[RMDB]
RNA sequence: GGGAACGACUCGAGUAGAGUCGAAAAGGAAAUAAUGCACAUAAUCCAGUCGCAGACGCUAAAAAUAACGCUGCGUCGCGACGGAUGUGGCAACGCACACCGAAGUGCUAACGGUAGCGUAAAAAAAGUAGUCUUUAUAGUUCGCUAUAAAGACUACAAAAGAAACAACAACAACAAC
Reactivity to 2A3 in 0.01 (KOAc 150mM, MgCl2 10mM, bicine 150mM(pH8.5), 24C), signal-to-noise 8, nucleotides 027 to 126: g100g040a070a100a040u200a080a090u120g040c060a050c020a300u200a210a090u160c020c020a060g000u000c000g000c070a090g000a000c000g000c020u090a120a060a040a080a150u210a170a070c110g040c190u080g000c010g000u010c000g000c000g000a000c000g000g000a000u000g000u000g000g000c010a010a010c010g000c000a030c020a000c080c010g020a090a020g220u210g120c080u080a120a020c010g010g010u010a020g000c000g000u080a090a050a010a000a010a010a020
Reactivity to DMS in 0.01 (KOAc 150mM, MgCl2 10mM, bicine 150mM(pH8.5), 24C), signal-to-noise 5, nucleotides 027 to 126: g010g010a120a080a060u000a090a100u000g000c010a080c020a030u000a150a060u000c000c010a150g030u000c000g030c000a120g030a010c000g010c020u010a010a060a090a120a110u010a080a100c220g020c180u000g000c000g020u000c000g010c000g000a010c010g000g000a010u000g020u000g000g000c030a070a030c050g010c010a040c150a080c020c010g000a050a090g010u000g020c120u010a060a090c030g000g010u000a090g010c010g010u010a000a000a030a070a090a060a070
This 177-nucleotide RNA was probed chemically with 2A3 and DMS.
2A3 adducts were read by reverse transcription with SuperScript II with manganese.
The reactions ran in a buffer of 150 mM KOAc, 10 mM MgCl2 and 150 mM bicine (pH 8.5), at 24 C.
For DMS, 5,832 sequencing reads were counted.